An RNA of 207 nucleotides, treated with 2A3 and read out base by base.

RNA sequence: GGGAACGACUCGAGUAGAGUCGAAAAAACAAACAUCAAAUCGCAUAGCAAAGAGUCAAAAAAAUAGAGAGCUUUGCGAGACCUACCAAGGGUGAAGAGAUACCAUCCAAGGAGCUGAAGAGAAAGCGAGAGCUCACGGCGUUCGCGCCGUGAGCAACUAGUAGGCAAACUUCGGUUUGCCUACUAGAAAAGAAACAACAACAACAAC
Reactivity to 2A3 in 0.01 (KOAc 150mM, MgCl2 10mM, bicine 150mM(pH8.5), 24C), signal-to-noise 1, nucleotides 027 to 156: a000a000c200a110a070a010c100a170u150c080a000a100a000u010c000g000c010a000u040a020g020c000a050a070a140g040a110g140u220c150a140a300a110a060a030a000a000u240a010g100a020g040a030g050c000u030u040u000g000c000g000a020g040a020c030c010u030a100c040c010a040a070g020g000g000u010g010a030a000g120a020g020a050u080a230c040c000a000u040c000c060a010a110g000g000a010g000c080u040g090a110a000g060a050g090a060a060a000g110c030g030a090g010a020g120c000u000c000a000c000g000g100c000g000u060u060c070g010c040g070c100c000g070u000g000a000g000c000a000a000
The data come from the RNA Mapping Database (RMDB), library M2RFPK.